[RMDB]
RNA sequence: GGGAACGACUCGAGUAGAGUCGAAAAGCAAAGCACAUGAAGCACAUGAAGCACAUGAAGGACAUGAAGCACAUGAAGCACAUGAAGCACAUGAAGCACAUGAAGCACAUGAAGCACAUGAAAAAAAUCUUAAACAAAUGUUCGCAUUUGUUUAAGAAAAAGAAACAACAACAACAAC
Reactivity to DMS in 0.01 (KOAc 150mM, MgCl2 10mM, bicine 150mM(pH8.5), 24C), signal-to-noise 3, nucleotides 027 to 126: g040c050a060a100a080g010c100a110c040a050u000g010a070a070g000c030a170c090a040u010g010a080a110g030c060a110c040a030u000g000a070a070g000g010a250c040a010u000g000a070a080g000c090a150c080a060u000g000a060a070g020c070a160c040a060u000g010a020a110g010c080a120c070a020u000g000a040a120g030c100a140c070a060u010g000a090a100g010c000a140c060a040u010g000a070a100g000c060a070c070a050u010g000a010a000a020a110a050a040a130
Reactivity to 2A3 in 0.01 (KOAc 150mM, MgCl2 10mM, bicine 150mM(pH8.5), 24C), signal-to-noise 2, nucleotides 027 to 126: g070c040a010a050a060g000c020a010c000a070u030g060a100a010g020c020a010c000a060u050g040a160a000g030c000a020c000a020u050g060a050a010g050g010a020c010a020u040g040a130a020g000c010a000c000a080u070g100a090a040g010c020a050c000a090u040g060a110a030g000c010a010c010a050u040g040a060a030g010c000a010c000a030u050g030a090a020g010c000a020c000a050u040g020a060a010g000c000a020c010a040u100g050a100a010a000a000a000a010a090